An RNA of 177 nucleotides, treated with DMS and 2A3 and read out base by base. For DMS, 917 sequencing reads were counted. The data come from the RNA Mapping Database (RMDB), library M2PK50. Conditions: 150 mM KOAc, 10 mM MgCl2 and 150 mM bicine (pH 8.5), 24 C.

[RMDB]
RNA sequence: GGGAACGACUCGAGUAGAGUCGAAAACAGCGUACCUUCGGGUACGCUGAAAACUAAAACAAAUGCAAAGCCCGAUACGGCAAAACGAGCGAAAAGAAUUAGAAAGUAGGUGGUUCGCCACCUACAACCUUUUUAAACACUUCGGUGUUUAAAAAGGAAAAGAAACAACAACAACAAC
Reactivity to DMS in 0.01 (KOAc 150mM, MgCl2 10mM, bicine 150mM(pH8.5), 24C), signal-to-noise 1, nucleotides 027 to 126: c010a000g010c000g040u000a000c000c000u000u000c200g040g050g000u000a000c000g000c000u000g010a010a040a030a110c100u000a000a060a070a190c150a050a090a050u000g030c030a120a180a220g020c000c060c120g010a120u000a040c180g010g050c020a060a030a070a060c200g000a180g000c030g000a040a050a060a070g000a060a060u040u010a150g010a100a110a180g000u000a010g000g010u000g010g000u000u020c280g030c010c000a000c000c020u000a000c000a010a040
Reactivity to 2A3 in 0.01 (KOAc 150mM, MgCl2 10mM, bicine 150mM(pH8.5), 24C), signal-to-noise 1, nucleotides 027 to 126: c000a000g000c000g020u000a010c010c010u020u070c250g060g000g030u000a010c010g000c010u000g000a000a010a000a000c010u070a030a000a000a040c030a030a070a040u200g020c010a020a000a070g000c030c020c010g140a200u200a250c080g060g000c030a000a090a000a150c050g030a020g020c030g030a010a040a040a050g060a040a130u080u070a130g130a180a170a000g000u020a010g000g000u010g000g010u040u050c150g000c010c010a000c000c000u000a010c010a010a000